[RMDB]
RNA sequence: GGGAACGACUCGAGUAGAGUCGAAAAUGUGUCUCCUUCGGGAGACACAAACGCUCGCAGCCCGAGGCCGCUCGGGCAAGGCAGCGGCCAGCCAGCGAGCUAUGUGUUAUCAAUUCGUUGAUAACAAUACGAUCACUAAAUUCGUUUAGUGAUCGUAAAAAGAAACAACAACAACAAC
Reactivity to 2A3 in 0.01 (KOAc 150mM, MgCl2 10mM, bicine 150mM(pH8.5), 24C), signal-to-noise 3, nucleotides 027 to 126: u050g000u000g000u010c000u020c000c010u030u080c150g080g000g000a000g010a000c000a000c000a020a000a000c020g000c000u010c000g000c010a020g030c000c010c000g040a040g010g020c020c030g060c020u040c060g130g010g020c020a010a010g030g000c030a000g030c010g020g020c010c010a010g030c020c020a010g000c000g000a000g000c020u080a170u140g180u010g000u000u010a010u000c010a010a020u060u070c220g050u040u030g010a010u010a000a010c000a000a000
Reactivity to DMS in 0.01 (KOAc 150mM, MgCl2 10mM, bicine 150mM(pH8.5), 24C), signal-to-noise 6, nucleotides 027 to 126: u000g000u000g000u000c000u000c000c000u000u020c220g030g010g010a010g020a000c000a000c000a020a070a070c230g000c010u000c010g010c010a170g000c010c010c030g000a070g010g010c040c070g010c000u000c050g020g010g010c180a000a020g000g010c130a030g010c030g010g000c010c010a080g000c050c080a200g000c000g010a020g010c010u000a030u000g000u000g000u000u000a000u000c000a010a040u000u010c200g010u000u000g010a010u000a000a010c010a050a150